[RMDB]
RNA sequence: GGGAACGACUCGAGUAGAGUCGAAAAGAUAUGGACCUGGCGUAGCAACAGCUAUAGGUCGGAAACGACCUCAUAGACAUGCUACCCAGGUCCUAAGUCAAAAUCGGCGUAGUUCGCUACGCCGAAAUCGUGUCAGUGACUUCGGUCACUGACACGAAAAAGAAACAACAACAACAAC
Reactivity to DMS in 0.01 (KOAc 150mM, MgCl2 10mM, bicine 150mM(pH8.5), 24C), signal-to-noise 1, nucleotides 027 to 126: g010a020u000a040u010g000g000a000c000c000u000g000g000c300g010u000a000g010c010a150a010c250a140g020c000u000a000u010a000g000g010u110c000g040g000a000a010a000c000g000a010c000c000u000c300a000u000a000g000a020c020a260u040g000c000u020a000c000c000c000a000g000g000u000c000c000u000a000a040g000u000c000a140a090a090a090u000c010g040g010c000g000u000a010g000u000u020c300g010c000u010a000c000g000c010c000g010a000a030a010
Structure probing data (DMS) for a 177-nucleotide construct.
High DMS reactivity at an A or C suggests that its Watson-Crick edge is free.
For DMS the reverse transcriptase was MarathonRT.
Conditions: 150 mM KOAc, 10 mM MgCl2 and 150 mM bicine (pH 8.5), 24 C.